[RMDB]
RNA sequence: GGGAACGACUCGAGUAGAGUCGAAAAGAUUCAGAACAGGGCAACCAGUUUUUCAGCAGGAGAGAAGCACUCUCAAAAAGGUUUGGCUGGGCUAUUAGAGAACCUUAUCUCAGUUGGAUAAGCCUUGAGUCAGAGAGUUUUUCGAAACUCUCUGACUAAAAGAAACAACAACAACAAC
Reactivity to DMS in 0.01 (KOAc 150mM, MgCl2 10mM, bicine 150mM(pH8.5), 24C), signal-to-noise 3, nucleotides 027 to 126: g000a170u010u000c020a060g010a090a110c060a030g000g000g000c060a060a070c040c050a130g010u000u010u000u010u030c050a100g020c120a120g000g020a040g010a040g000a090a200g010c170a140c060u020c010u000c040a040a090a090a110a110g000g000u010u010u000g000g010c030u000g010g000g000c060u010a050u030u020a150g010a070g000a050a060c160c030u000u010a090u010c010u010c040a090g000u000u020g000g000a060u030a070a100g000c040c010u000u010g010
Reactivity to 2A3 in 0.01 (KOAc 150mM, MgCl2 10mM, bicine 150mM(pH8.5), 24C), signal-to-noise 3, nucleotides 027 to 126: g040a040u060u070c030a000g080a180a090c040a040g000g020g000c000a070a090c020c010a040g030u010u020u000u050u060c080a070g010c080a070g000g150a030g010a010g000a090a010g050c040a070c050u010c000u010c000a070a030a000a000a030g180g000u080u040u030g040g000c030u020g010g000g000c010u060a060u190u200a100g030a010g020a090a040c030c030u130u040a150u090c030u000c060a060g040u060u070g070g020a100u050a200a000g000c000c000u010u040g010
This 177-nucleotide RNA was probed chemically with DMS and 2A3. For 2A3 the reverse transcriptase was SuperScript II with manganese. 2A3 is a SHAPE reagent: it acylates the 2'-hydroxyl of flexible nucleotides of all four kinds. The reactions ran in a buffer of 150 mM KOAc, 10 mM MgCl2 and 150 mM bicine (pH 8.5), at 24 C. The 2A3 profile rests on 1,293 reads.